[RMDB]
An RNA of 207 nucleotides, treated with 2A3 and DMS and read out base by base. Conditions: 150 mM KOAc, 10 mM MgCl2 and 150 mM bicine (pH 8.5), 24 C. Reactivities are rounded to 0.1 and cut off at 0 and 3. The data come from the RNA Mapping Database (RMDB), library M2RFPK.
RNA sequence: GGGAACGACUCGAGUAGAGUCGAAAAAUACACCAGCAGUAGGACUCAGCGACCGGCACAACAAGGUUGUGCUGGUAUCCGACGGUCGUAUAGCCCUGUCUUGCAGGUUGCCUUGCACUGACGUGCCACACCAUUUACAGAUUCGUCUGUAAAUGAAUACAAAAGGUUAGUUCGCUAACCUUUUGUAAAAAGAAACAACAACAACAAC
Reactivity to 2A3 in 0.01 (KOAc 150mM, MgCl2 10mM, bicine 150mM(pH8.5), 24C), signal-to-noise 4, nucleotides 027 to 156: a000u100a000c050a010c020c010a010g030c020a010g040u080a030g010g040a040c020u040c170a030g020c050g060a010c010c000g020g020c000a000c000a000a040c050a180a120g240g020u010u020g000u010g000c010u020g040g010u020a050u020c020c030g050a020c040g030g010u010c030g000u070a090u150a150g020c000c000c000u030g060u090c050u050u130g020c020a030g010g030u070u140g050c010c010u040u070g000c010a010c040u150g070a060c100g020u050g020c020c010a110c000a010c040c000a000u000u000u010a010c000a000g010a020u020u100c130g040u000c090u000g010u010a010a000a000u010g000a010a030
Reactivity to DMS in 0.01 (KOAc 150mM, MgCl2 10mM, bicine 150mM(pH8.5), 24C), signal-to-noise 4, nucleotides 027 to 156: a150u000a090c070a210c020c030a110g010c050a060g020u010a060g020g020a050c010u000c140a200g010c010g040a030c000c000g010g050c010a120c020a050a040c000a130a090g050g010u010u010g030u000g000c020u010g020g010u000a010u010c060c040g000a180c010g020g020u000c010g040u000a140u000a120g010c010c000c010u000g010u000c000u010u010g030c030a130g010g010u000u010g010c020c100u010u010g010c010a100c050u010g020a160c150g020u010g010c010c060a110c080a110c110c000a010u000u000u000a010c000a000g010a060u000u010c300g000u000c010u000g010u000a000a000a010u000g000a100a150